RNA sequence: GGGAACGACUCGAGUAGAGUCGAAAACGGUUGAAAACGGCGGCGAUGACCUGCGGGUAGGGGUGAAAGGCCUAUCAAACCCGGAGAUAUCUCGUUCUCCCCGAAAUAGCUUUAGGGCUAGCGUCGCAUUUCGGUUGUUCUUCGGAACAACCGAAAUAAAAGAAACAACAACAACAAC
Reactivity to 2A3 in 0.01 (KOAc 150mM, MgCl2 10mM, bicine 150mM(pH8.5), 24C), signal-to-noise 1, nucleotides 027 to 126: c010g000g090u040u020g060a000a000a000a000c030g030g000c020g010g000c000g000a000u010g090a030c000c000u040g020c000g000g000g020u060a010g030g000g030g000u070g120a000a160a090g220g070c000c040u050a030u090c030a030a130a090c000c000c020g020g000a000g000a000u100a070u170c090u050c090g040u040u020c030u090c020c000c000c000g130a050a050a000u080a000g010c050u110u110u190a090g000g110g000c040u010a030g030c000g000u110c060g020c010
Reactivity to DMS in 0.01 (KOAc 150mM, MgCl2 10mM, bicine 150mM(pH8.5), 24C), signal-to-noise 1, nucleotides 027 to 126: c020g020g060u000u000g000a010a050a090a040c110g000g000c120g010g070c090g000a030u040g000a020c160c010u000g000c180g000g010g000u010a220g000g010g000g000u000g000a240a060a060g030g010c200c010u000a030u040c160a070a050a130c060c010c010g050g000a050g000a110u000a000u070c130u000c030g000u020u010c020u000c000c010c010c000g000a020a050a160u000a010g000c000u000u020u010a130g030g000g010c010u000a020g000c060g000u000c000g000c210